Structure probing data (DMS and 2A3) for a 207-nucleotide construct. The reactions ran in a buffer of 150 mM KOAc, 10 mM MgCl2 and 150 mM bicine (pH 8.5), at 24 C. The DMS profile rests on 1,931 reads.

[RMDB]
RNA sequence: GGGAACGACUCGAGUAGAGUCGAAAAGAAGGUCCUAGAGGUAAGCUUCAAUCACAAACUACAGGUUUGUUUAAGAUCUGUUCACGUAAUUUUAAAGGGUUACCCCCCGCGUAUGCACCAACCUAUAUAGCGUUGGAUGAGAAAUAUAAAGUGGGAGGGUAUACCUAAGGUUCGCCUUAGGUAUACCAAAAGAAACAACAACAACAAC
Reactivity to DMS in 0.01 (KOAc 150mM, MgCl2 10mM, bicine 150mM(pH8.5), 24C), signal-to-noise 1, nucleotides 027 to 156: g000a200a120g050g000u010c000c000u000a090g000a090g050g000u010a060a030g010c030u000u020c160a070a070u010c030a070c050a060a080a130c030u010a020c040a030g030g050u000u030u010g010u000u020u010a120a100g000a030u000c000u010g000u000u020c060a150c240g010u010a050a050u000u000u000u000a070a100a060g040g010g010u010u000a050c000c030c030c000c010c020g070c010g030u000a130u000g000c030a090c000c000a020a030c030c000u000a220u000a170u000a030g040c110g000u000u000g000g000a100u000g030a150g010a040a070a130u000a060u000a070a020a080g000u000g000g060g000a170g010
Reactivity to 2A3 in 0.01 (KOAc 150mM, MgCl2 10mM, bicine 150mM(pH8.5), 24C), signal-to-noise 2, nucleotides 027 to 156: g010a020a020g020g000u010c010c000u040a020g000a020g100g040u090a080a020g010c070u080u070c060a000a170u170c020a060c130a100a220a000c100u210a080c130a170g000g060u020u040u030g060u040u140u140a020a000g000a010u000c010u020g000u240u140c060a020c030g020u020a010a150u040u040u050u300a090a150a070g010g030g020u110u080a130c010c000c000c030c000c030g000c010g000u090a020u080g000c000a000c000c000a000a020c000c000u110a110u070a060u080a300g090c120g000u000u010g000g000a000u050g030a020g020a010a080a000u120a010u060a080a070a020g020u070g010g010g000a080g000
2A3 adducts were read by reverse transcription with SuperScript II with manganese.